[RMDB]
RNA sequence: GGGAACGACUCGAGUAGAGUCGAAAAAGAUCCACGCUACGGCGUCGAUCACACGUUCAUCCCUAUUGGGACGGAAGUAGGCAUAGUGCCGAAGGAACGCAUUAGUCAUGCGCUACGGCGCAUGACACACAUCAGAGUCACUUCGGUGACUCUGAAACAUAUGGUUACAGUUCGCUGUAACCAUAUGAAAAGAAACAACAACAACAAC
Reactivity to DMS in 0.01 (KOAc 150mM, MgCl2 10mM, bicine 150mM(pH8.5), 24C), signal-to-noise 3, nucleotides 027 to 156: a080g010a010u000c010c040a050c000g010c020u010a110c180g100g030c020g060u010c090g010a070u010c010a200c080a050c030g000u000u000c020a130u000c000c000c000u000a170u020u000g030g020g020a030c010g020g010a030a060g030u000a160g000g010c010a180u000a090g040u000g030c000c010g020a110a140g020g020a070a090c090g000c030a110u000u000a120g000u000c050a030u000g000c000g020c010u000a080c230g070g000c010g010c000a020u000g010a020c000a030c080a020c080a140u000c000a020g000a030g000u000c010a030c000u000u000c300g050g030u000g000a000c000u010c000u000g010a020a080a070
Reactivity to 2A3 in 0.01 (KOAc 150mM, MgCl2 10mM, bicine 150mM(pH8.5), 24C), signal-to-noise 8, nucleotides 027 to 156: a000g010a000u010c050c040a010c010g000c010u040a040c270g120g010c010g010u010c020g000a000u010c010a020c010a000c100g000u010u010c010a010u050c010c000c010u160a300u150u300g010g000g000a010c010g000g030a030a020g010u020a010g020g000c040a080u110a290g140u170g150c000c000g010a010a000g040g020a010a000c010g000c050a060u040u190a040g010u000c000a000u010g000c000g000c010u020a050c300g090g000c000g000c000a000u000g000a000c000a000c000a000c000a090u030c000a000g000a000g000u000c000a010c010u070u120c250g090g000u000g000a000c000u000c000u000g000a000a000a000